[RMDB]
RNA sequence: GGGAACGACUCGAGUAGAGUCGAAAAGCUGACACGAUCCUAACUGCCUACCAGUAAUAAACAGAACAAGGGGUUUGGGAUCCUAUUGAUGCUAGGGCAUCUGCUGAGCACUACAUAGGCCAUGGAAAAGCACGCACCAUAUUUCACAGCAAAAACACACCUAAUUAUCAUUCGUGAUAAUUAGGUGAAAAGAAACAACAACAACAAC
Reactivity to 2A3 in 0.01 (KOAc 150mM, MgCl2 10mM, bicine 150mM(pH8.5), 24C), signal-to-noise 9, nucleotides 027 to 156: g020c020u040g030a020c010a010c160g010a020u000c000c000u020a030a030c030u170g220c010c010u060a100c040c050a030g110u060a040a180u110a190a140a050c110a050g110a080a020c060a100a060g010g010g000g000u030u080u080g060g040g020a010u020c000c020u140a160u080u150g050a050u040g010c040u060a090g030g070g000c020a060u010c050u060g000c030u030g030a020g020c020a020c060u100a010c030a040u070a030g060g000c030c020a020u060g030g020a040a070a010a010g020c020a020c050g010c010a020c010c040a020u040a100u100u140u080c080a050c020a040g050c040a020a010a030a100a020c090a010
Reactivity to DMS in 0.01 (KOAc 150mM, MgCl2 10mM, bicine 150mM(pH8.5), 24C), signal-to-noise 3, nucleotides 027 to 156: g030c040u000g010a140c050a120c050g010a090u000c010c000u000a060a270c010u000g020c010c000u000a060c050c010a300g000u000a100a090u000a070a050a100c020a100g010a110a080c110a200a100g010g020g020g010u000u000u010g070g020g010a070u000c010c040u000a100u000u000g000a080u000g010c030u000a080g000g000g010c030a120u000c050u000g050c020u000g000a110g000c030a090c020u000a060c070a060u010a060g010g020c040c040a110u000g020g000a060a070a050a130g010c040a040c050g000c050a070c030c020a040u000a080u000u010u010c040a090c050a070g030c050a030a060a050a090a060c060a170
Chemical mapping of a 207-nucleotide RNA with 2A3 and DMS. For DMS, 5,872 sequencing reads were counted. The reactions ran in a buffer of 150 mM KOAc, 10 mM MgCl2 and 150 mM bicine (pH 8.5), at 24 C. The data come from the RNA Mapping Database (RMDB), library OK3TST. 2A3 adducts were read by reverse transcription with SuperScript II with manganese.